[RMDB]
RNA sequence: GGGAACGACUCGAGUAGAGUCGAAAAAGUCAGAGGGCGCUACCAUGCAAACUAGGGCUGGCUACUCUUGCACAGAAUCACAUCUCGAUAAUUGUUAGUGCAAGAAGGACAAUUAUACCAUUUAAUGAAAACGUUUACCUGUUCGCAGGUAAACGAACAAGCGAACAUGGUUCGCCAUGUUCGCUUGAAAAGAAACAACAACAACAAC
Reactivity to 2A3 in 0.01 (KOAc 150mM, MgCl2 10mM, bicine 150mM(pH8.5), 24C), signal-to-noise 5, nucleotides 027 to 156: a000g010u010c030a020g010a040g020g020g000c030g000c020u110a250c080c080a090u190g030c010a020a040a060c050u060a030g030g100g000c020u010g020g000c010u080a080c010u030c000u000u010g000c020a010c010a020g220a120a040u100c020a040c030a180u060c040u080c140g080a080u080a160a060u090u040g030u090u080a050g010u010g000c000a000a000g010a020a010g030g010a020c030a040a010u130u040a060u080a130c020c050a070u140u140u140a170a160u130g080a020a070a020a010c010g000u000u010u000a000c000c000u000g010u050u040c170g000c100a010g000g000u000a000a000a000c000g000a000a000
Reactivity to DMS in 0.01 (KOAc 150mM, MgCl2 10mM, bicine 150mM(pH8.5), 24C), signal-to-noise 2, nucleotides 027 to 156: a090g040u020c040a120g030a160g000g020g020c090g030c040u000a040c030c080a100u010g000c080a090a170a150c040u000a180g040g010g030c090u000g000g010c020u010a090c020u010c000u000u000g010c020a020c040a110g000a110a140u030c070a050c090a080u010c110u000c070g040a140u000a070a050u000u000g010u000u000a160g010u000g020c010a050a010g000a060a040g010g000a070c040a030a130u000u000a080u000a150c050c010a090u000u000u010a070a120u010g000a080a060a080a150c030g000u000u000u010a010c000c010u000g020u000u000c300g000c010a000g000g000u000a000a000a040c000g010a030a100
Structure probing data (2A3 and DMS) for a 207-nucleotide construct. Conditions: 150 mM KOAc, 10 mM MgCl2 and 150 mM bicine (pH 8.5), 24 C. Source: RMDB library M2RFOK, as collected in RNAgym. For 2A3, 2,560 sequencing reads were counted. The DMS profile rests on 3,145 reads. For 2A3 the reverse transcriptase was SuperScript II with manganese.